[RMDB]
About this RNA
This 177-nucleotide RNA was probed chemically with DMS and 2A3. Values cover nucleotides 27 to 126. 2A3 adducts were read by reverse transcription with SuperScript II with manganese. The RNA was probed in 150 mM KOAc, 10 mM MgCl2 and 150 mM bicine (pH 8.5) at 24 C.
RNA sequence: GGGAACGACUCGAGUAGAGUCGAAAACGGGAAAGCCCUUCGCGGACGAGAAGCCUUGCCCGCGUGAGCGCCCGCCCGCCGAUCAGCUGGCGGCAUUUUUGGGCCGCACGGUGCGGUGAACCCGCGACGUGAGGACCCUUUUCGAAGGGUCCUCACGAAAAGAAACAACAACAACAAC
Reactivity to DMS in 0.01 (KOAc 150mM, MgCl2 10mM, bicine 150mM(pH8.5), 24C), signal-to-noise 9, nucleotides 027 to 126: c040g000g000g000a060a070a140g010c010c020c030u000u000c020g030c000g010g010a030c030g010a040g010a230a200g010c210c010u000u000g010c010c000c000g020c010g030u000g000a050g000c060g000c020c010c020g000c090c090c030g010c010c010g000a070u010c090a060g010c060u010g000g010c000g000g000c040a020u000u000u010u010u000g010g010g010c000c010g000c010a040c010g000g000u010g010c020g000g000u000g010a110a190c040c000c010g020c130g010a010
Reactivity to 2A3 in 0.01 (KOAc 150mM, MgCl2 10mM, bicine 150mM(pH8.5), 24C), signal-to-noise 9, nucleotides 027 to 126: c020g000g000g050a110a170a070g030c020c010c000u100u090c010g000c000g000g020a030c030g010a020g030a300a070g060c020c010u030u050g000c000c010c000g010c010g010u040g030a050g010c080g120c000c010c010g020c010c010c000g000c000c010g050a160u170c090a050g100c080u140g020g000c000g010g000c020a060u060u070u110u260u220g160g070g000c010c000g010c040a070c030g030g010u120g010c030g000g020u050g050a030a040c000c000c000g020c050g060a070